[RMDB]
RNA sequence: GGGAACGACUCGAGUAGAGUCGAAAAGGUCAUACAAUUAUGCUGUGUCUAGUGCCUUCUGGUUAUUCACCCACAUUCCAAUGGCGGGUUUGGUACGAAUGUAUAAUUUGUUAGCAUGCCUUUGGCUCUUAACGGUUUAGUUCGCUAAACCGUUAAGAAAAGAAACAACAACAACAAC
Reactivity to 2A3 in 0.01 (KOAc 150mM, MgCl2 10mM, bicine 150mM(pH8.5), 24C), signal-to-noise 5, nucleotides 027 to 126: g020g000u060c010a000u030a090c000a030a040u050u010a020u080g010c020u020g020u020g070u150c040u060a040g030u000g070c020c000u050u100c060u090g110g000u120u070a070u120u150c020a050c010c020c000a020c000a050u160u080c030c020a100a050u030g030g010c040g010g010g000u090u090u070g020g020u030a010c010g040a120a050u070g030u020a030u010a100a030u040u060u070g010u020u020a030g050c060a050u060g010c010c000u010u010u030g050g020c010u000
Reactivity to DMS in 0.01 (KOAc 150mM, MgCl2 10mM, bicine 150mM(pH8.5), 24C), signal-to-noise 4, nucleotides 027 to 126: g020g000u000c090a090u010a050c050a040a050u000u000a020u000g000c020u000g020u000g010u000c150u000a140g010u000g010c020c010u010u010c160u000g000g010u000u010a110u010u020c110a170c010c020c020a060c070a050u000u010c160c130a100a060u000g010g000c100g020g000g020u000u000u000g010g000u010a020c030g000a080a040u000g000u000a020u000a020a030u000u000u000g010u000u000a100g010c150a060u000g000c010c000u000u000u000g010g010c120u000

This 177-nucleotide RNA was probed chemically with 2A3 and DMS. The 2A3 profile rests on 6,650 reads. As a SHAPE reagent, 2A3 marks flexible, mostly unpaired nucleotides at the ribose 2'-OH. Values cover nucleotides 27 to 126. Source: RMDB library 15KREP, as collected in RNAgym. The reactions ran in a buffer of 150 mM KOAc, 10 mM MgCl2 and 150 mM bicine (pH 8.5), at 24 C. For DMS, 4,213 sequencing reads were counted.